[RMDB]
RNA sequence: GGGAACGACUCGAGUAGAGUCGAAAAUAGGCGAACGAGAGGCCCUCUCUUGUGCGGAGUUGUCACGCUGACAUAAUUGUUAUGAUGUCCGAUUCCGGUAGCAUCGCGGCGAUGCUUUCAUAGGACAUCUUAUGAACCCAAGGGCUUCGGGGAAGCACCAUCGUGGAGUAUUCGUACUCCACGAUGGAAAAGAAACAACAACAACAAC
Reactivity to DMS in 0.01 (KOAc 150mM, MgCl2 10mM, bicine 150mM(pH8.5), 24C), signal-to-noise 1, nucleotides 027 to 156: u010a090g030g020c010g030a090a020c010g000a180g030a030g040g000c010c000c000u000c020u000c070u000u020g000u010g030c050g010g000a150g000u000u000g010u000c040a180c070g020c040u000g000a110c050a050u000a070a100u000u010g000u000u000a090u000g010a020u000g000u000c030c020g010a230u000u010c130c090g100g000u000a010g010c000a000u000c020g030c110g040g000c140g000a010u000g000c000u010u010u000c010a060u010a120g040g000a050c030a000u000c010u010u000a050u000g020a090a130c040c010c010a020a040g010g010g000c010u000u000c040g000g000g010g000a130a100g000c120a180
Reactivity to 2A3 in 0.01 (KOAc 150mM, MgCl2 10mM, bicine 150mM(pH8.5), 24C), signal-to-noise 1, nucleotides 027 to 156: u130a050g060g000c020g020a060a000c030g010a020g000a010g070g000c000c000c000u030c000u000c000u010u190g140u090g070c140g010g010a100g050u110u170g020u080c070a070c140g020c110u050g020a020c000a030u110a060a110u190u130g150u090u190a080u220g000a000u000g000u010c000c010g070a040u160u000c050c060g000g000u000a000g000c000a000u000c010g040c100g300g000c160g030a000u000g000c000u030u090u070c040a130u100a070g000g000a000c000a020u000c000u000u030a030u000g040a050a030c000c000c030a000a000g000g030g000c000u000u020c010g010g000g000g030a080a000g040c010a020
Structure probing data (DMS and 2A3) for a 207-nucleotide construct. 2A3 adducts were read by reverse transcription with SuperScript II with manganese. Conditions: 150 mM KOAc, 10 mM MgCl2 and 150 mM bicine (pH 8.5), 24 C.